Structure probing data (2A3 and DMS) for a 177-nucleotide construct.
RNA sequence: GGGAACGACUCGAGUAGAGUCGAAAAGGUAUGAUCCGGAGAUUGCUGUAUAGAUACUCAAACAGCUGAAUUCGGCGCAUCUAGUACAUGAGUUUGUCGCUUACGAUGUGCGGUCGGGCAUGCCCGGGGUCUGUCUACCUUUCGAGGUGGACGGGCUAAAAGAAACAACAACAACAAC
Reactivity to 2A3 in 0.01 (KOAc 150mM, MgCl2 10mM, bicine 150mM(pH8.5), 24C), signal-to-noise 4, nucleotides 027 to 126: g020g000u010a000u020g060a190u020c000c000g000g000a030g000a020u050u100g000c000u000g030u010a040u030a070g120a060u120a100c040u050c060a070a080a010c000a000g000c000u040g060a040a080u100u040c020g080g000c000g000c000a000u000c010u030a030g020u040a020c020a060u100g060a070g200u050u150u130g090u000c070g000c000u050u030a050c080g000a000u000g000u000g000c000g000g020u240c000g000g000g000c010a000u020g000c000c010c000g020g010
Reactivity to DMS in 0.01 (KOAc 150mM, MgCl2 10mM, bicine 150mM(pH8.5), 24C), signal-to-noise 2, nucleotides 027 to 126: g010g010u010a000u010g010a030u020c010c010g000g000a050g010a110u030u010g010c000u000g000u000a090u020a110g010a150u040a120c250u010c120a100a090a050c020a000g010c000u010g000a080a120u040u010c070g010g020c000g020c020a010u000c010u020a040g030u030a030c070a030u000g000a100g000u030u020u010g000u000c300g000c140u000u020a290c300g000a030u000g000u000g000c000g000g000u070c010g010g000g010c020a010u000g020c000c000c030g000g020
The RNA was probed in 150 mM KOAc, 10 mM MgCl2 and 150 mM bicine (pH 8.5) at 24 C. The 2A3 profile rests on 5,226 reads. It was measured as part of the RMDB library OK1LIB. High 2A3 reactivity points to a flexible backbone, as in loops and unpaired stretches. For DMS the reverse transcriptase was MarathonRT.